An RNA of 177 nucleotides, treated with 2A3 and DMS and read out base by base. The data come from the RNA Mapping Database (RMDB), library OK2TST. Conditions: 150 mM KOAc, 10 mM MgCl2 and 150 mM bicine (pH 8.5), 24 C.

[RMDB]
RNA sequence: GGGAACGACUCGAGUAGAGUCGAAAAUAUUGGCUCCACCCUGCUUUGUCUUGGCUACCACUGUUCCCUCGUAUUGGAGCUGAUAGAAAAAUGGCUGGAAAGACAAGUCCUUGGUCAAAUGAUGCAAAAAUAUGCGGAAUUUCGAUUCCGCAUAUUUAAAAGAAACAACAACAACAAC
Reactivity to 2A3 in 0.01 (KOAc 150mM, MgCl2 10mM, bicine 150mM(pH8.5), 24C), signal-to-noise 1, nucleotides 027 to 126: u060a000u030u020g020g010c000u000c000c000a040c020c000c010u000g000c030u120u110u120g050u000c040u030u070g060g020c000u020a070c000c020a050c040u040g000u010u030c000c020c000u050c100g060u070a070u140u140g020g000a000g010c000u000g010a030u040a060g180a000a070a000a000a040u030g000g000c030u020g050g010a150a030a010g060a030c010a050a000g070u010c000c010u070u070g050g020u040c010a000a000a230u110g030a010u110g000c040a060a060
Reactivity to DMS in 0.01 (KOAc 150mM, MgCl2 10mM, bicine 150mM(pH8.5), 24C), signal-to-noise 3, nucleotides 027 to 126: u000a030u000u010g000g000c020u000c010c020a120c110c030c020u010g010c060u020u000u020g020u000c010u010u000g010g010c060u010a060c040c030a070c130u010g010u010u000c010c000c010u000c180g020u010a140u000u000g020g000a040g010c020u010g020a020u000a040g000a040a070a080a090a120u000g010g010c070u000g010g020a080a060a080g010a060c080a060a110g000u010c030c030u000u010g010g000u010c050a060a090a080u000g010a100u000g000c110a040a110